[RMDB]
RNA sequence: GGGAACGACUCGAGUAGAGUCGAAAAACAAGCGUUGAGGUGAAAUAAGGUCUUAGCCUUGCUUUUGAGUUUUGGAAGAUGAGCGAAGUAGGGUGAAGUAGUCAUCUUUGCUAAGCAUGUAGAGGUCUUUGUGGGAUUAUUUUUGGACAGGGGUUCGGUCUUGUAGUACGUUCGCGUACUACAAGACAAAAGAAACAACAACAACAAC
Reactivity to DMS in 0.01 (KOAc 150mM, MgCl2 10mM, bicine 150mM(pH8.5), 24C), signal-to-noise 2, nucleotides 027 to 156: a070c050a050a080g010c090g080u050u000g020a070g010g010u010g010a070a090a120u000a090a070g030g010u000c020u000u000a240g010c000c010u010u000g030c010u000u020u060u000g020a140g000u000u000u000u010g000g020a070a080g010a060u010g000a060g040c050g020a080a040g010u000a070g010g000g060u000g010a080a130g030u010a140g000u010c020a060u000c040u000u000u000g060c060u000a040a170g010c030a060u000g020u000a100g010a040g020g010u000c050u000u000u010g020u010g010g000g020a090u000u030a140u010u000u000u000u000g010g010a060c040a060g000g000g030g010u010u010c080g040
Reactivity to 2A3 in 0.01 (KOAc 150mM, MgCl2 10mM, bicine 150mM(pH8.5), 24C), signal-to-noise 3, nucleotides 027 to 156: a000c060a060a010g020c090g090u070u100g010a010g040g020u050g030a070a100a100u170a070a040g040g010u040c050u040u100a030g010c000c000u010u030g010c030u060u060u070u090g130a070g030u050u040u130u100g030g020a040a040g020a050u070g020a000g050c030g020a060a010g030u070a040g040g000g020u050g050a040a020g020u110a020g030u030c020a030u020c000u050u050u020g030c020u030a060a040g010c020a020u060g000u040a020g030a020g030g040u020c000u040u080u080g050u010g010g010g010a010u030u080a060u040u260u030u060u040g020g010a010c010a020g000g000g040g020u030u060c030g030

An RNA of 207 nucleotides, treated with DMS and 2A3 and read out base by base. For 2A3 the reverse transcriptase was SuperScript II with manganese. It was measured as part of the RMDB library ARCHII. 2A3 is a SHAPE reagent: it acylates the 2'-hydroxyl of flexible nucleotides of all four kinds. Conditions: 150 mM KOAc, 10 mM MgCl2 and 150 mM bicine (pH 8.5), 24 C.